[RMDB]
RNA sequence: GGGAACGACUCGAGUAGAGUCGAAAAAGAUCCGAGGAUGUCCGAAUGGGGAAACCCAGCCACAGUGAUGUGUGGUUACCCGCGCCUGAAUAUAUAGGGCGUGUGGAGGGAACGUGGGGAAGUGAAAUCACAGUGGUCAAUUCGUUGACCACUGUGAAAAAGAAACAACAACAACAAC
Reactivity to DMS in 0.01 (KOAc 150mM, MgCl2 10mM, bicine 150mM(pH8.5), 24C), signal-to-noise 4, nucleotides 027 to 126: a050g000a120u030c050c060g000a130g000g010a060u010g000u000c030c040g000a120a120u020g010g000g020g000a140a080a140c010c000c010a090g000c030c010a000c010a040g010u010g010a110u030g010u000g000u000g000g000u010u010a110c040c010c000g000c000g010c000c000u000g010a140a090u050a150u060a070u000a220g000g010g010c010g010u000g000u040g030g000a150g030g000g000a120a040c050g010u000g000g000g000g010a090a090g000u020g000a090a060a110
Reactivity to 2A3 in 0.01 (KOAc 150mM, MgCl2 10mM, bicine 150mM(pH8.5), 24C), signal-to-noise 2, nucleotides 027 to 126: a000g040a070u020c050c000g030a050g070g010a100u120g050u000c010c010g000a140a120u040g010g020g020g000a010a070a010c000c000c040a000g000c000c000a030c040a000g060u070g150a120u040g120u020g000u020g110g000u060u070a040c040c000c000g000c000g000c000c000u050g010a080a000u170a000u050a020u150a130g020g000g030c000g000u010g000u120g000g010a010g000g020g010a030a050c030g000u080g000g010g000g040a070a000g140u090g090a090a010a020